[RMDB]
RNA sequence: GGGAACGACUCGAGUAGAGUCGAAAAAGUGAGUAUGGCUCGUUACGACGAGCCAUACUCACAUCGGUUUUCCUAAAUCGUCGUGAGACGGACCUUGGAAAACCUAGUAUUUAAAUAACUAGGUCAAAUUAGCCUAGAUCCUUCGGGAUCUAGGCAACAUAGUGCAAAACUUCGGUUUUGCACUAUGAAAAGAAACAACAACAACAAC
Reactivity to DMS in 0.01 (KOAc 150mM, MgCl2 10mM, bicine 150mM(pH8.5), 24C), signal-to-noise 1, nucleotides 027 to 156: a100g000u010g000a060g020u000a030u000g010g000c000u000c010g030u010u000a160c300g050a080c000g030a040g060c000c000a000u000a000c000u000c000a000c010a030u000c050g000g000u020u000u010u010c020c000u040a030a020a030u010c010g060u000c010g000u000g010a300g040a030c000g000g000a040c050c030u060u010g020g000a060a090a050a010c000c000u010a030g030u000a130u010u000u020a080a160a300u000a080a110c060u000a030g030g010u000c040a090a090a280u010u010a060g010c000c000u000a010g000a010u000c000c010u000u010c230g040g000g010a030u000c000u000a000g000g010c000a000a000
Reactivity to 2A3 in 0.01 (KOAc 150mM, MgCl2 10mM, bicine 150mM(pH8.5), 24C), signal-to-noise 2, nucleotides 027 to 156: a010g000u000g000a000g000u000a000u000g000g000c000u000c030g000u010u070a120c300g030a000c000g000a110g010c000c000a010u000a010c000u000c010a010c000a010u000c020g000g000u000u000u000u010c000c000u000a000a020a010u040c000g000u000c010g050u060g130a080g000a020c000g000g020a000c000c000u010u040g010g010a010a010a010a010c000c000u000a020g010u000a040u070u150u140a140a190a170u160a050a030c140u080a000g010g020u020c020a020a010a250u200u200a040g010c000c000u010a000g000a010u000c010c000u030u120c190g060g000g000a000u010c000u000a000g000g000c000a000a000

Notes
The data come from the RNA Mapping Database (RMDB), library M2RFPK. Chemical mapping of a 207-nucleotide RNA with DMS and 2A3. The RNA was probed in 150 mM KOAc, 10 mM MgCl2 and 150 mM bicine (pH 8.5) at 24 C. For 2A3 the reverse transcriptase was SuperScript II with manganese.